[RMDB]
RNA sequence: GGGAACGACUCGAGUAGAGUCGAAAACAGGCAAUAGAAGGUUCAUCCCUCAAGAUUGCAAUAACAUUAAUUCCUAUUAAUUCAGCCUGCCCUGCAAAAUUCAUGAUGGGAUUUUUUGCCGAGUCACCUUUUAGAAAUGGUUCGCCAUUUCUAAAAGAAAAGAAACAACAACAACAAC
Reactivity to 2A3 in 0.01 (KOAc 150mM, MgCl2 10mM, bicine 150mM(pH8.5), 24C), signal-to-noise 3, nucleotides 027 to 126: c020a000g080g000c020a020a070u030a120g150a240a030g180g000u160u180c040a040u060c020c020c000u020c050a080a060g060a160u020u090g010c000a040a140u120a100a030c010a030u090u150a100a040u140u210c000c010u060a080u120u130a150a090u120u120c010a010g010c000c010u010g010c010c000c000u000g000c000a020a050a060a070u080u090c030a070u140g090a040u130g020g060g000a050u040u010u020u020u100u050g000c020c000g010a000g030u010c030a050c010
Reactivity to DMS in 0.01 (KOAc 150mM, MgCl2 10mM, bicine 150mM(pH8.5), 24C), signal-to-noise 4, nucleotides 027 to 126: c090a070g010g010c020a060a060u000a090g010a100a060g000g010u010u000c170a100u000c110c010c000u000c040a070a110g000a070u000u000g010c030a090a080u000a080a110c100a090u000u010a070a130u010u000c040c040u000a110u010u000a040a090u010u010c080a080g020c020c010u000g000c040c030c030u000g000c040a020a030a060a050u000u010c030a050u000g000a060u010g010g010g000a020u000u010u010u000u010u000g010c020c000g010a050g000u000c060a060c080